[RMDB]
RNA sequence: GGGAACGACUCGAGUAGAGUCGAAAAUACCAAAAACUGGAACUAAUCAAAGCUCAAGCCCAGCAGCGAUGUUUGUAUUAGUAGCAGGUAUAGGUUUAAUCGCGACUGUACGACGUAGAAAAGCUAGGCGUAAGACCAAUUUCGAUUGGUCUUACGCAAAAGAAACAACAACAACAAC
Reactivity to 2A3 in 0.01 (KOAc 150mM, MgCl2 10mM, bicine 150mM(pH8.5), 24C), signal-to-noise 3, nucleotides 027 to 126: u170a030c020c000a140a000a000a000a010c040u050g070g050a020a010c030u030a030a020u110c050a080a050a010g070c010u030c090a070a030g030c030c040c030a020g050c080a030g010c010g110a120u150g070u070u020u070g030u030a020u020u050a040g010u000a000g080c020a010g000g080u090a100u120a050g060g040u060u040u050a120a100u110c050g000c020g120a040c010u010g030u100a020c070g080a020c050g110u060a050g090a130a120a020a030g020c020u080a040g090
Reactivity to DMS in 0.01 (KOAc 150mM, MgCl2 10mM, bicine 150mM(pH8.5), 24C), signal-to-noise 2, nucleotides 027 to 126: u030a050c010c060a040a020a020a140a030c090u020g000g000a110a090c020u000a040a060u010c010a040a060a170g000c040u020c040a130a130g000c000c020c090a120g030c080a070g000c090g010a110u000g030u000u000u000g010u050a010u000u000a030g010u000a050g000c020a040g010g000u010a010u000a090g020g000u000u000u000a000a030u050c210g020c020g000a070c030u000g000u000a030c040g010a110c010g000u020a050g000a030a030a070a110g000c040u040a050g000
The data come from the RNA Mapping Database (RMDB), library OK1LIB. Chemical mapping of a 177-nucleotide RNA with 2A3 and DMS. The DMS profile rests on 2,749 reads. Reactivities are given for positions 27 through 126. DMS adducts were read by reverse transcription with MarathonRT. For 2A3, 1,777 sequencing reads were counted.